This 177-nucleotide RNA was probed chemically with DMS. Source: RMDB library TTRDEL, as collected in RNAgym. The DMS profile rests on 993 reads. DMS adducts were read by reverse transcription with MarathonRT.

RNA sequence: GGGAACGACUCGAGUAGAGUCGAAAAGAUAUGGAGUACUCUUGGACCUGAAUGUGUCGGAAACGACAUUCAGCUAGAGUCUCCUAAGUCAAACUAGAGCCCCAUAGUUCGCUAUGGGGCUCUAGAACUUUACAUCAAGCUUCGGCUUGAUGUAAAGAAAAGAAACAACAACAACAAC
Reactivity to DMS in 0.01 (KOAc 150mM, MgCl2 10mM, bicine 150mM(pH8.5), 24C), signal-to-noise 1, nucleotides 027 to 126: g010a050u000a300u000g000g010a030g010u010a010c010u000c000u000u010g040g000a090c300c000u000g000a050a020u000g000u000g030u000c010g000g000a140a110a150c010g020a040c020a030u000u010c010a020g030c040u000a000g000a010g000u000c000u000c000c000u010a010a060g010u030c030a090a150a250c020u020a000g010a000g000c000c000c000c000a000u000a000g010u010u010c270g010c020u020a000u000g000g000g000g000c000u010c000u000a000g000a020a140